Description: An RNA of 207 nucleotides, treated with DMS and 2A3 and read out base by base. DMS adducts were read by reverse transcription with MarathonRT. The 2A3 profile rests on 1,575 reads. For DMS, 3,085 sequencing reads were counted.
RNA sequence: GGGAACGACUCGAGUAGAGUCGAAAAGGAGCACCAUGUGGCAUGGACCCUGUGGGAGCCAGAGGUUGCUGUCUGAUGUCCCCUCCCAAGGAUCCUUCCUUCUUCCAGGAAGUUCACCCCUAGGUCCCCUGGGCAGCCCGAGGGUCUGGGACAGGCACAUAUUUAGCACGUUCGCGUGCUAAAUAUGAAAAGAAACAACAACAACAAC
Reactivity to DMS in 0.01 (KOAc 150mM, MgCl2 10mM, bicine 150mM(pH8.5), 24C), signal-to-noise 1, nucleotides 027 to 156: g020g030a150g030c020a100c000c030a070u000g010u020g010g000c030a170u000g060g010a100c020c010c010u000g050u010g030g020g000a170g010c070c030a100g000a170g050g010u000u000g020c010u000g000u000c040u020g010a140u010g000u000c000c000c010c060u020c010c010c010a120a110g010g010a060u010c070c030u000u000c000c020u000u040c070u000u010c140c110a100g010g000a080a070g010u020u000c050a110c040c020c020c040u000a070g000g000u000c020c020c000c010u020g030g020g010c050a100g020c050c010c010g010a150g000g020g000u000c050u000g000g000g000a000c020a040g020g000c100a290
Reactivity to 2A3 in 0.01 (KOAc 150mM, MgCl2 10mM, bicine 150mM(pH8.5), 24C), signal-to-noise 3, nucleotides 027 to 156: g060g000a030g000c040a010c030c010a060u070g050u140g140g000c110a130u140g070g060a150c000c010c010u100g060u160g060g000g000a040g090c020c010a040g040a080g070g010u040u060g000c030u030g040u040c030u080g070a160u140g060u010c000c000c000c000u050c000c000c000a000a010g020g000a070u080c020c040u010u040c010c000u100u160c030u190u050c100c060a010g030g000a000a030g010u140u160c040a070c000c020c010c010u010a000g050g070u090c010c020c010c020u030g000g010g060c010a060g080c020c010c000g010a040g000g050g010u030c060u040g020g000g010a010c000a020g050g010c040a000